[RMDB]
RNA sequence: GGGAACGACUCGAGUAGAGUCGAAAACAGUGCUAAUAGAAAAUAUUGGAGUAAGGGUGUACUAAGGAAGUUCUCAAUCUUUCCCCUUCACUAUCUUCUGUAAUGUAACUUCAAUAAAUGUGAUUCUCAUCUUGGCACAAAAUUGGGAAUGGUGUGACGGAGGACGAGGAUUCGUCCUCGUCCUCCGAAAAGAAACAACAACAACAAC
Reactivity to 2A3 in 0.01 (KOAc 150mM, MgCl2 10mM, bicine 150mM(pH8.5), 24C), signal-to-noise 1, nucleotides 027 to 156: c060a000g010u000g000c030u040a050a080u080a140g040a000a150a000a060u050a000u050u010g000g010a000g000u040a150a190g000g010g000u060g030u130a170c190u190a030a060g060g000a040a020g100u120u040c080u020c130a050a090u010c040u090u020u000c010c000c000c010u020u050c010a000c020u030a080u120c000u220u040c070u180g060u210a040a040u070g020u040a020a060c000u050u030c030a080a000u040a150a080a050u110g040u080g140a210u280u020c030u000c010a130u010c000u000u020g040g040c040a080c020a060a090a050a120u000u060g030g000g030a090a070u090g070g020u060g000u110g080a000